[RMDB]
Chemical mapping of a 177-nucleotide RNA with 2A3. The reactions ran in a buffer of 150 mM KOAc, 10 mM MgCl2 and 150 mM bicine (pH 8.5), at 24 C. 2A3 adducts were read by reverse transcription with SuperScript II with manganese.
RNA sequence: GGGAACGACUCGAGUAGAGUCGAAAAGGUCGAGAACUGGAUGAUUCCGUCACUGCCGGCGUCGGCGAAACCUUUGAUCGCGGCGUUGACGGUUUCCGAGGAGGUGCAGUUGAUAGCCGGGAAAGCGGACGCUGUCUCGGUUCGCCGAGACAGCGUCAAAAGAAACAACAACAACAAC
Reactivity to 2A3 in 0.01 (KOAc 150mM, MgCl2 10mM, bicine 150mM(pH8.5), 24C), signal-to-noise 1, nucleotides 027 to 126: g000g030u140c000g020a000g000a180a120c130u060g020g020a210u130g050a020u100u070c000c000g000u000c030a000c110u170g000c000c000g180g000c020g020u000c050g050g030c000g030a050a080a050c010c010u180u040u300g050a050u210c050g000c010g000g010c000g010u000u050g000a000c040g020g000u020u000u000c000c000g070a040g020g000a070g060g000u100g000c020a000g000u000u010g080a130u020a080g000c000c000g000g000g010a080a140a130g050c060g050
It was measured as part of the RMDB library OK1LIB. The 2A3 profile rests on 528 reads.